[RMDB]
RNA sequence: GGGAACGACUCGAGUAGAGUCGAAAAUCAAGUCCGCUGGUUUGACAAUUCGUGUAAAUAGCACUAACCCUGCUAUUAUGGAUCGCGUUAAUGCCGUAAACUCAAUGAUAUUGAAUGGCGAAGGCGAGCGCAGGUUGCUGGUUAAUACCAAUAGGUGCACAUGUGAGUGUUUCGACACUCACAUGUGAAAAGAAACAACAACAACAAC
Reactivity to 2A3 in 0.01 (KOAc 150mM, MgCl2 10mM, bicine 150mM(pH8.5), 24C), signal-to-noise 2, nucleotides 027 to 156: u130c010a020a020g120u020c040c040g060c070u060g000g020u040u080u130g070a070c040a070a110u130u080c130g000u080g020u110a060a080a020u070a050g000c020a010c000u010a020a030c000c030c000u000g000c000u050a020u030u050a080u090g050g000a070u020c040g050c010g040u030u040a040a010u130g000c000c010g060u070a060a080a140c050u010c030a010a030u110g100a060u080a030u260u110g050a030a030u130g000g000c060g010a070a030g120g010c000g000a010g000c030g000c040a000g000g090u040u040g020c000u020g030g090u060u060a100a040u110a150c030c020a030a070u150a120g100g000u060g030
Reactivity to DMS in 0.01 (KOAc 150mM, MgCl2 10mM, bicine 150mM(pH8.5), 24C), signal-to-noise 2, nucleotides 027 to 156: u000c070a060a210g000u000c030c040g080c050u000g000g000u000u000u020g040a090c020a040a240u000u000c070g000u000g030u000a060a080a030u000a030g020c020a040c000u020a060a180c140c100c240u010g020c000u010a040u010u000a110u000g020g000a080u000c010g010c050g000u000u000a020a010u010g040c020c000g010u000a080a060a090c040u000c030a040a080u010g000a170u000a300u020u030g020a020a110u000g000g000c030g040a100a110g030g010c020g000a040g010c000g000c050a100g030g010u000u000g010c010u000g000g020u010u010a020a170u020a120c000c020a060a100u000a120g050g020u010g000
The record gives the reactivity of an RNA of 207 nucleotides to 2A3 and DMS.
2A3 adducts were read by reverse transcription with SuperScript II with manganese.
Reactivities are given for positions 27 through 156.
The reactions ran in a buffer of 150 mM KOAc, 10 mM MgCl2 and 150 mM bicine (pH 8.5), at 24 C.